This 177-nucleotide RNA was probed chemically with DMS and 2A3.
The DMS profile rests on 4,388 reads.
For DMS the reverse transcriptase was MarathonRT.
In probing experiments dimethyl sulfate is read out at A N1 and C N3, which are open when not base-paired.
2A3 adducts were read by reverse transcription with SuperScript II with manganese.
It was measured as part of the RMDB library TTRINS.
[RMDB]
RNA sequence: GGGAACGACUCGAGUAGAGUCGAAAAGAUAUGGACACGCGGAUGCAAGCGCCAAUCAGGCGUUUGACGUAAUUCGGAAACGAAUUACCGAGCCUGGAGCGUGAUGACCAUCCGCGUGUCCUAAGUCGCUACUAAGAAACUUCGGUUUCUUAGUAGCAAAAGAAACAACAACAACAAC
Reactivity to DMS in 0.01 (KOAc 150mM, MgCl2 10mM, bicine 150mM(pH8.5), 24C), signal-to-noise 5, nucleotides 027 to 126: g020a070u010a300u000g000g000a020c020a020c020g000c000g000g000a020u010g020c020a080a130g000c010g000c000c060a140a130u010c050a030g010g020c000g000u010u000u000g020a200c300g000u000a000a010u010u000c000g000g000a060a090a200c010g000a010a010u000u000a000c000c000g000a140g020c000c000u000g030g000a100g010c030g010u010g010a080u020g010a150c300c000a010u000c000c000g000c000g000u000g010u000c000c000u010a020a070g000u010c090
Reactivity to 2A3 in 0.01 (KOAc 150mM, MgCl2 10mM, bicine 150mM(pH8.5), 24C), signal-to-noise 3, nucleotides 027 to 126: g010a020u100a010u170g000g010a010c000a000c000g020c000g000g000a000u020g030c050a140a300g020c010g000c040c050a050a160u300c010a010g000g010c060g070u140u280u300g030a020c020g000u000a000a010u010u000c000g000g000a000a090a060c010g000a010a000u010u010a000c000c030g040a010g020c000c000u030g020g000a110g020c020g020u040g010a120u160g030a030c010c010a000u010c000c000g000c000g000u000g010u000c000c000u000a000a010g000u020c030

The reactions ran in a buffer of 150 mM KOAc, 10 mM MgCl2 and 150 mM bicine (pH 8.5), at 24 C.